[RMDB]
RNA sequence: GGGAACGACUCGAGUAGAGUCGAAAAUGCGGACCUGCGUAGUUUCGAAAAGCGGACGGCCACGACGGCCCUUUGGGUGGGGUUGCAGCCGUAGCGCAUCGCAAAGACGCCGAGGUCACCCACGCAACCGUCUAGGUAUUUUCGAAUACCUAGACGGAAAAGAAACAACAACAACAAC
Reactivity to DMS in 0.01 (KOAc 150mM, MgCl2 10mM, bicine 150mM(pH8.5), 24C), signal-to-noise 4, nucleotides 027 to 126: u040g000c080g020g010a010c010c000u010g000c010g000u000a020g020u000u020u020c020g000a000a010a130a010g000c030g010g000a010c020g000g010c010c050a160c030g000a300c010g040g000c000c020c000u000u010u010g010g020g050u010g000g010g010g040u010u000g010c020a300g000c030c000g020u000a040g000c000g020c000a020u000c000g000c100a000a010a060g010a030c010g000c020c300g000a010g000g000u000c000a110c010c010c000a300c140g000c070a100a140
Reactivity to 2A3 in 0.01 (KOAc 150mM, MgCl2 10mM, bicine 150mM(pH8.5), 24C), signal-to-noise 9, nucleotides 027 to 126: u130g010c030g050g010a010c000c000u000g010c010g010u030a040g110u030u000u030c000g010a010a010a010a010g000c000g000g010a000c000g000g000c010c030a150c080g190a050c010g040g000c000c010c000u120u220u200g300g020g060u250g010g010g000g020u010u010g010c010a010g000c000c000g000u000a010g010c000g000c000a000u010c000g020c050a010a010a010g030a010c010g010c030c050g120a020g010g000u000c020a070c010c000c000a020c020g030c010a040a100